[RMDB]
RNA sequence: GGGAACGACUCGAGUAGAGUCGAAAAUACUAGCAUUCGGUUCCAACCCUGGAUGGAUACUCAAAGGUAGGCUGAGUUCCUUCCUCCGGCCUUGGUUCCGAUGCUCCAUCCAAGGCCGGAAACCAAAUUGAUAAAGGGUUUUCGAACCCUUUAUCAAAAAAGAAACAACAACAACAAC
Reactivity to DMS in 0.01 (KOAc 150mM, MgCl2 10mM, bicine 150mM(pH8.5), 24C), signal-to-noise 4, nucleotides 027 to 126: u010a110c050u000a100g010c050a050u010u000c060g010g020u000u000c040c060a070a160c040c020c030u010g010g000a030u010g010g000a040u010a040c020u000c020a030a100a120g000g000u000a030g010g010c120u000g010a050g010u000u000c000c020u000u000c030c030u000c010c000g020g000c010c000u010u000g000g000u000u000c060c050g000a060u000g000c030u000c050c050a070u000c010c010a020a010g010g010c010c020g020g000a010a020a060c150c120a030a050a150
Reactivity to 2A3 in 0.01 (KOAc 150mM, MgCl2 10mM, bicine 150mM(pH8.5), 24C), signal-to-noise 1, nucleotides 027 to 126: u140a020c040u020a020g000c010a030u060u100c070g030g020u040u070c040c020a060a010c040c000c040u040g000g010a010u010g010g000a050u080a100c020u020c040a080a100a000g140g060u060a040g130g080c030u030g010a010g030u040u010c000c000u020u020c030c010u040c010c010g000g000c000c000u000u020g000g000u100u020c010c000g000a020u070g020c010u020c020c020a020u020c000c000a000a000g000g000c000c000g000g000a020a000a000c030c000a060a040a110